[RMDB]
RNA sequence: GGGAACGACUCGAGUAGAGUCGAAAAUUUGAGGUCUUAGAUUGAGGUCUUUAAUCUAUUUUGAUUUGAUUUUUGUACAUGGUGAGAGAUAGGGGUCCAGUUUCAUUUUUCUGCAUAUGGAGUUCCAGUUUUCCCAGCACCAUUUAUUGAAGAAACAGCAUAUGGUGAUAUUCGUAUCACCAUAUGCAAAAGAAACAACAACAACAAC
Reactivity to 2A3 in 0.01 (KOAc 150mM, MgCl2 10mM, bicine 150mM(pH8.5), 24C), signal-to-noise 1, nucleotides 027 to 156: u080u030u110g010a010g000g020u010c000u000u050a100g010a240u060u020g030a000g000g000u050c000u010u080u080a070a020u000c060u060a070u110u090u040u040g090a050u030u050u020g090a060u090u090u110u150u140g050u030a050c020a050u050g000g000u010g050a040g000a000g130a060u280a260g020g000g000g000u030c010c000a000g000u110u000u000c010a010u060u040u170u190u090c060u010g030c000a050u040a030u140g040g000a050g020u150u010c010c010a000g020u010u000u060u000c010c000c000a010g040c020a020c000c020a000u030u260u050a000u150u220g080a160a020g170a160a040a010c040a010
Reactivity to DMS in 0.01 (KOAc 150mM, MgCl2 10mM, bicine 150mM(pH8.5), 24C), signal-to-noise 1, nucleotides 027 to 156: u000u000u020g020a100g010g030u010c010u000u020a090g050a170u000u030g030a030g020g000u000c030u010u000u010a040a090u000c020u000a100u010u000u010u000g020a070u000u000u010g010a110u000u000u040u000u000g010u020a070c080a120u020g020g030u000g010a220g010a090g020a120u020a150g060g000g020g010u020c030c020a050g000u010u000u030c050a090u000u000u000u000u000c040u000g010c060a050u000a070u010g020g060a070g040u020u000c030c000a070g010u000u000u000u000c020c020c010a150g000c040a110c050c030a070u000u010u020a050u020u000g020a030a060g000a120a020a080c120a210
About this RNA
This 207-nucleotide RNA was probed chemically with 2A3 and DMS. Reactivities are given for positions 27 through 156. 2A3 adducts were read by reverse transcription with SuperScript II with manganese. DMS adducts were read by reverse transcription with MarathonRT. The reactions ran in a buffer of 150 mM KOAc, 10 mM MgCl2 and 150 mM bicine (pH 8.5), at 24 C. For DMS, 2,087 sequencing reads were counted.